Overview:
The record gives the reactivity of an RNA of 177 nucleotides to DMS. For DMS, 997 sequencing reads were counted. The RNA was probed in 150 mM KOAc, 10 mM MgCl2 and 150 mM bicine (pH 8.5) at 24 C. The data come from the RNA Mapping Database (RMDB), library OK2TRN. DMS adducts were read by reverse transcription with MarathonRT.

RNA sequence: GGGAACGACUCGAGUAGAGUCGAAAAAGGGAGGUGAAAGGAUUCGAUUCAGUGCAUCCUGUAGGGGGGGGGGAGUAUAAAUUGCAGGUGUACUUCAGUCUGGAUCGAUCGACAGCAUGUUCAUGCAGCUAAAAAUGGUAUUCGUACCAUUUUUAGCAAAAGAAACAACAACAACAAC
Reactivity to DMS in 0.01 (KOAc 150mM, MgCl2 10mM, bicine 150mM(pH8.5), 24C), signal-to-noise 1, nucleotides 027 to 126: a100g000g000g020a050g030g010u000g000a130a110a150g020g020a090u000u000c010g000a020u000u000c020a010g000u000g030c080a020u000c000c010u000g030u020a030g010g000g000g000g000g000g020g000g000g000a030g020u000a020u000a030a060a130u000u000g000c030a030g030g070u000g010u000a060c140u020u020c110a060g000u000c110u010g020g010a000u010c030g000a020u000c070g010a110c200a080g010c070a030u000g000u000u000c110a090u000g000c130a210